[RMDB]
RNA sequence: GGGAACGACUCGAGUAGAGUCGAAAAAAUGGGCAUGUGUUACAGUGUACUCUUUCAGUUUUGCCAUCUGCAGAUGGCUCGCGUUAAUCAGCUCAAUUAGACCCUCUUUAUCGCAAGGACAGAGGGCUUUCUGUUUCCUGGGUUCUUGCUCUAGUGAACUGAUGAUGAGGUUCGCCUCAUCAUCAGUAAAAGAAACAACAACAACAAC
Reactivity to 2A3 in 0.01 (KOAc 150mM, MgCl2 10mM, bicine 150mM(pH8.5), 24C), signal-to-noise 2, nucleotides 027 to 156: a000a000u040g010g010g000c110a180u070g090u040g030u120u060a030c080a030g020u050g040u070a090c030u030c080u060u070u220c080a070g020u080u050u150u130g000c000c000a010u000c030u180g130c050a090g000a010u000g000g000c000u010c000g000c000g000u030u020a010a070u000c030a020g000c000u000c000a010a030u000u050a110g110a210c000c000c040u040c050u020u130u060a250u090c040g000c020a030a000g020g000a000c000a000g030a050g020g020g010c010u000u060u060c020u060g110u000u020u000c000c010u020g040g090g000u010u010c020u020u000g010c050u050c010u030a120g060u110g080a060
Reactivity to DMS in 0.01 (KOAc 150mM, MgCl2 10mM, bicine 150mM(pH8.5), 24C), signal-to-noise 1, nucleotides 027 to 156: a050a070u000g010g010g040c040a100u000g000u000g010u010u020a130c100a120g000u010g020u000a060c050u000c030u030u000u000c020a190g020u000u000u000u000g000c000c040a050u000c030u000g040c220a250g030a060u000g000g020c000u010c110g000c040g050u010u000a060a120u000c030a070g000c030u000c000a050a110u000u000a090g000a040c000c030c030u000c020u000u000u010a050u010c020g030c040a120a090g030g000a050c060a120g000a030g000g000g020c010u000u000u000c050u000g000u000u000u000c020c020u000g020g040g000u000u000c030u010u010g000c010u000c060u000a120g020u000g010a090